Structure probing data (2A3) for a 177-nucleotide construct. The RNA was probed in 150 mM KOAc, 10 mM MgCl2 and 150 mM bicine (pH 8.5) at 24 C.

RNA sequence: GGGAACGACUCGAGUAGAGUCGAAAAAGAAGCACCCGCUUCUCACCUGUAGCGACGCAUAAAGCAGUUGGCAGGUUAAUCACAUUACACAUAACUGUGUAUAAGGAAGAGCGGGUAUUUUAUACCUCGUGAUCUCUUCCUUCGGGAAGAGAUCACGAAAAGAAACAACAACAACAAC
Reactivity to 2A3 in 0.01 (KOAc 150mM, MgCl2 10mM, bicine 150mM(pH8.5), 24C), signal-to-noise 2, nucleotides 027 to 126: a010g050a050a010g080c020a010c000c000c000g010c040u180u120c030u010c000a000c000c000u000g000u040a020g100c030g020a050c020g040c020a090u160a170a230a130g050c120a030g080u020u020g000g000c000a010g010g000u030u050a030a070u020c000a040c000a080u010u060a010c000a000c000a000u210a300a220c160u140g020u000g010u000a020u010a070a070g090g090a120a020g000a000g040c030g000g000g000u000a000u000u000u000u020a070u040a030c000c000u030